An RNA of 177 nucleotides, treated with 2A3 and DMS and read out base by base. The reactions ran in a buffer of 150 mM KOAc, 10 mM MgCl2 and 150 mM bicine (pH 8.5), at 24 C. For 2A3 the reverse transcriptase was SuperScript II with manganese. Source: RMDB library TTRDEL, as collected in RNAgym.

RNA sequence: GGGAACGACUCGAGUAGAGUCGAAAAGAUAUGGAACCAUCGUGCUUUUGACGGGUGUCGGAAACGACACCCCGAUAAGCACAUGGUUCCUAAGUCAAACUAUACGAGUGUUCGCACUCGUAUAGAACAACAAUAACAGGUUCGCCUGUUAUUGUUGAAAAGAAACAACAACAACAAC
Reactivity to 2A3 in 0.01 (KOAc 150mM, MgCl2 10mM, bicine 150mM(pH8.5), 24C), signal-to-noise 9, nucleotides 027 to 126: g010a010u060a030u160g000g000a010a000c010c000a010u040c220g010u010g000c020u150u300u290u090g010a010c010g010g000g000u000g000u010c000g020g020a060a060a050c010g000a000c000a010c010c000c000c000g000a000u010a030a010g000c000a000c000a000u000g000g000u000u000c000c000u000a020a000g000u000c020a020a050a120c000u000a000u000a010c000g000a000g000u010g060u090u160c300g090c130a010c000u000c000g000u000a000u000a000g000a000a010
Reactivity to DMS in 0.01 (KOAc 150mM, MgCl2 10mM, bicine 150mM(pH8.5), 24C), signal-to-noise 9, nucleotides 027 to 126: g010a030u000a300u000g000g000a010a000c000c000a000u000c240g040u000g010c010u000u000u010u000g000a300c300g000g000g010u000g010u000c000g010g000a100a080a150c010g000a010c000a000c000c000c000c000g000a070u000a000a010g000c010a000c010a010u000g000g000u000u000c000c000u000a010a060g000u000c020a130a100a250c010u000a000u000a000c000g000a020g020u000g010u010u010c240g020c010a010c000u000c000g000u000a000u000a000g000a080a160